[RMDB]
Chemical mapping of a 177-nucleotide RNA with DMS and 2A3. It was measured as part of the RMDB library OK2TRN. The 2A3 profile rests on 862 reads. The reactions ran in a buffer of 150 mM KOAc, 10 mM MgCl2 and 150 mM bicine (pH 8.5), at 24 C.
RNA sequence: GGGAACGACUCGAGUAGAGUCGAAAAGAAUGGGGCAAAACAAACCUGGACAGGGAACAGAGGGGCAGUACUAUGGAUUUUCACAAUCUAUCAAAGUGAAUGAUUCCUUAACUGAAGACAAGGUUGAUCAUGCCUGGAUAUUCGUAUCCAGGCAUGAAAAAGAAACAACAACAACAAC
Reactivity to DMS in 0.01 (KOAc 150mM, MgCl2 10mM, bicine 150mM(pH8.5), 24C), signal-to-noise 2, nucleotides 027 to 126: g030a090a190u010g010g020g050g020c100a040a070a110a060c120a070a130a110c030c010u000g000g010a130c080a130g000g000g000a060a110c150a010g010a130g010g040g030g010c050a030g020u000a120c170u000a090u000g010g000a020u000u000u000u010c020a020c050a070a120u010c180u000a110u010c210a050a100a070g000u000g000a030a010u000g000a090u000u010c030c020u010u000a060a060c100u000g020a060a040g000a150c180a050a030g000g010u000u000g000a150
Reactivity to 2A3 in 0.01 (KOAc 150mM, MgCl2 10mM, bicine 150mM(pH8.5), 24C), signal-to-noise 1, nucleotides 027 to 126: g060a060a070u080g040g010g020g010c030a000a030a070a090c020a030a070a020c010c000u050g050g050a030c080a050g040g020g000a070a000c010a030g050a020g040g000g010g000c000a050g030u030a070c050u070a070u030g050g000a000u000u060u060u000c020a000c020a090a030u040c020u180a180u140c100a020a050a000g020u020g010a040a000u070g120a160u080u140c030c000u020u090a040a090c030u010g090a030a000g070a070c100a110a060g070g000u080u050g010a050
For DMS, 1,112 sequencing reads were counted. 2A3 adducts were read by reverse transcription with SuperScript II with manganese.